[RMDB]
RNA sequence: GGGAACGACUCGAGUAGAGUCGAAAAUCUAGACCAGCACUGCCUGAUGGAACUUUCUACAGUGAUGGAAAUGUUCGUAUCUGCAUGACCCAUGUGGCAGCCACUAGCCACCCAAGGCUAUGGAGCACCAGAAGUGUGGCUAAUGCAACUGGGGAAAUGAGUAAAAUCAUUUCGAUGAUUUUACUCAAAAAGAAACAACAACAACAAC
Reactivity to 2A3 in 0.01 (KOAc 150mM, MgCl2 10mM, bicine 150mM(pH8.5), 24C), signal-to-noise 6, nucleotides 027 to 156: u070c040u050a040g070a110c020c030a030g020c030a010c040u020g040c030c030u060g020a050u080g030g020a020a050c010u040u030u020c020u030a080c060a270g120u100g180a260u100g030g020a030a040a060u180g010u040u020c060g030u100a080u040c010u040g010c040a050u110g090a120c000c000c020a060u210g020u060g030g020c030a020g050c010c000a040c050u010a000g020c000c000a050c040c010c020a080a050g030g000c000u010a060u100g050g030a050g060c050a090c040c000a040g060a260a070g110u060g000u040g130g000c030u070a030a030u080g000c020a070a070c060u010g000g000g010g010a010a040a070
Reactivity to DMS in 0.01 (KOAc 150mM, MgCl2 10mM, bicine 150mM(pH8.5), 24C), signal-to-noise 2, nucleotides 027 to 156: u000c070u000a160g000a180c040c020a020g030c010a070c000u010g020c010c080u000g000a060u010g030g010a020a080c060u010u010u000c000u010a050c030a050g010u000g000a250u000g050g020a020a040a050u010g000u000u000c020g030u000a090u000c040u000g050c080a080u000g020a190c050c000c030a120u000g070u010g030g030c000a100g020c030c010a030c000u000a040g000c010c000a040c050c070c060a130a160g020g020c000u020a220u000g000g010a250g070c140a070c050c000a090g010a060a180g000u020g000u000g010g000c030u000a020a070u000g020c060a040a070c020u010g010g010g000g020a030a040a180